[RMDB]
An RNA of 207 nucleotides, treated with 2A3 and read out base by base. The 2A3 profile rests on 445 reads. Reactivities are given for positions 27 through 156.
RNA sequence: GGGAACGACUCGAGUAGAGUCGAAAAUAAGGAGGGGUGAACCGGCCCAGGUCGGAAACGGAGCAGGUCAAAACUCCCGUGCUGAUCAGUAGUGGGAUCGCGCCUGUGAAUAGCCACUGCACUCCAGCCUGGGCAACAUAGCGAGACCCCGUCUCUUAGCUCUUAAAAGGUUCGCCUUUUAAGAGCUAAAAGAAACAACAACAACAAC
Reactivity to 2A3 in 0.01 (KOAc 150mM, MgCl2 10mM, bicine 150mM(pH8.5), 24C), signal-to-noise 1, nucleotides 027 to 156: u200a020a080g050g030a050g010g010g010g000u000g060a040a060c030c000g050g000c020c000c020a000g020g020u090c040g000g040a160a030a060c060g040g010a050g000c070a000g010g020u150c040a000a000a000a290c050u030c010c000c000g040u000g050c050u230g100a180u300c210a040g010u090a030g050u110g000g000g000a010u000c040g040c040g040c090c020u060g000u010g030a110a200u050a120g000c010c020a010c060u120g040c120a060c010u000c010c000a000g050c000c000u000g020g000g000c000a000a030c000a000u040a000g020c010g030a040g040a130c000c010c010c000g060u000c010u030c000u020u000
The reactions ran in a buffer of 150 mM KOAc, 10 mM MgCl2 and 150 mM bicine (pH 8.5), at 24 C. Source: RMDB library ARCHII, as collected in RNAgym. Reactivities are rounded to 0.1 and cut off at 0 and 3.